RNA sequence: GGGAACGACUCGAGUAGAGUCGAAAACUCGGAGAGCCAAGACAAAUCCAAGUCAAAAACCAACAAACCAAAUAAAUGACUUAACAAAAUGCUCCCCGUCUUUAAAUUUUGGAAAAGGGUCCCAAUAACAUCACCAGCUAUUCGUAGCUGGUGAUGUAAAAGAAACAACAACAACAAC
Reactivity to DMS in 0.01 (KOAc 150mM, MgCl2 10mM, bicine 150mM(pH8.5), 24C), signal-to-noise 1, nucleotides 027 to 126: c060u020c000g030g050a020g000a050g000c060c130a050a050g020a180c100a050a040a030u030c140c080a020a010g010u030c050a010a170a050a130a170c240c030a020a120c060a090a140a030c110c190a000a050a090u130a090a030a110u000g000a000c000u020u040a050a160c220a070a120a280a170u000g000c040u000c000c020c000c030g000u000c050u000u000u020a120a090a220u000u010u000u010g000g000a000a090a000a000g000g000g000u000c010c000c000a020a020u030a070
Reactivity to 2A3 in 0.01 (KOAc 150mM, MgCl2 10mM, bicine 150mM(pH8.5), 24C), signal-to-noise 2, nucleotides 027 to 126: c040u000c030g000g010a070g070a000g000c020c030a110a050g070a120c050a020a250a030u090c050c010a000a000g040u060c040a080a000a000a090a150c000c030a030a240c060a050a250a040c020c030a120a140a160u190a020a160a130u220g020a040c020u030u090a120a000c030a110a120a010a110u110g000c000u000c010c020c000c010g010u000c000u000u100u010a240a200a300u110u110u020u060g180g000a120a010a000a000g020g000g000u030c000c040c020a030a030u140a020
Annotation
The data come from the RNA Mapping Database (RMDB), library RFM100. The record gives the reactivity of an RNA of 177 nucleotides to DMS and 2A3. The RNA was probed in 150 mM KOAc, 10 mM MgCl2 and 150 mM bicine (pH 8.5) at 24 C. Reactivities are given for positions 27 through 126. For DMS, 815 sequencing reads were counted. For 2A3 the reverse transcriptase was SuperScript II with manganese.